[RMDB]
RNA sequence: GGGAACGACUCGAGUAGAGUCGAAAACAACAGGCAUACUGAGGAUGGACUUUUAAACCUCACUUGCACUGCAGCCUGCAAUCCGCAAAGUGGAGUUCUUUUACAUAUUUAUGUGAUUGCCUGAUACACCACUCUCCUUUUUCGAAAGGAGAGUGGUAAAAGAAACAACAACAACAAC
Reactivity to DMS in 0.01 (KOAc 150mM, MgCl2 10mM, bicine 150mM(pH8.5), 24C), signal-to-noise 4, nucleotides 027 to 126: c110a160a290c010a020g010g010c000a040u000a020c060u000g010a060g000g020a080u000g010g010a080c260u000u000u010u010a070a020a070c020c000u000c000a000c030u010u000g000c000a080c130u000g010c020a100g010c260c130u000g030c020a020a040u000c170c140g010c030a010a040a060g020u000g030g000a060g000u000u000c150u000u000u000u020a060c030a040u000a060u020u000u000a030u010g000u000g010a080u000u000g010c010c010u000g010a130u000a130c200
Reactivity to 2A3 in 0.01 (KOAc 150mM, MgCl2 10mM, bicine 150mM(pH8.5), 24C), signal-to-noise 4, nucleotides 027 to 126: c030a000a010c010a010g000g000c000a010u030a040c030u030g020a000g030g030a020u070g040g060a060c070u090u130u090u290a080a090a030c000c000u020c010a000c010u000u010g000c030a020c090u020g010c000a040g250c000c100u100g050c010a010a040u060c080c050g010c080a130a060a000g010u030g030g020a040g010u050u050c000u060u170u080u080a040c010a040u120a090u100u170u120a110u210g040u010g080a140u040u050g000c020c000u030g010a060u070a130c050
Source: RMDB library OK2TRN, as collected in RNAgym.
Chemical mapping of a 177-nucleotide RNA with DMS and 2A3.
Values cover nucleotides 27 to 126.
For DMS the reverse transcriptase was MarathonRT.
The RNA was probed in 150 mM KOAc, 10 mM MgCl2 and 150 mM bicine (pH 8.5) at 24 C.